[RMDB]
RNA sequence: GGGAACGACUCGAGUAGAGUCGAAAACACGAUGACUACGGUCAUCGUGAAUAAGAAAGCUGACCAGCUAUGAGGUCAUACAUCGUCAUAGCACAAAAUAAAAGCCUAGUCGUACGCGACUAGGCAACGAGUGCUGGUACUUCGGUACCAGCACUCGAAAAGAAACAACAACAACAAC
Reactivity to 2A3 in 0.01 (KOAc 150mM, MgCl2 10mM, bicine 150mM(pH8.5), 24C), signal-to-noise 3, nucleotides 027 to 126: c010a000c030g000a000u030g000a000c010u030a050c300g090g000u000c000a000u000c010g000u000g000a000a000u100a030a010g280a120a020a000g120c150u080g050a000c000c000a010g000c000u000a020u010g000a000g010g000u010c000a040u240a080c060a110u260c200g070u010c030a000u010a020g040c010a000c030a070a080a070a060u290a000a160a030a000g000c000c000u000a000g000u000c000g040u080a030c300g010c020g090a000c000u000a000g010g000c000a000a000
An RNA of 177 nucleotides, treated with 2A3 and read out base by base. 2A3 adducts were read by reverse transcription with SuperScript II with manganese. Source: RMDB library OK1LIB, as collected in RNAgym. The RNA was probed in 150 mM KOAc, 10 mM MgCl2 and 150 mM bicine (pH 8.5) at 24 C. For 2A3, 1,240 sequencing reads were counted.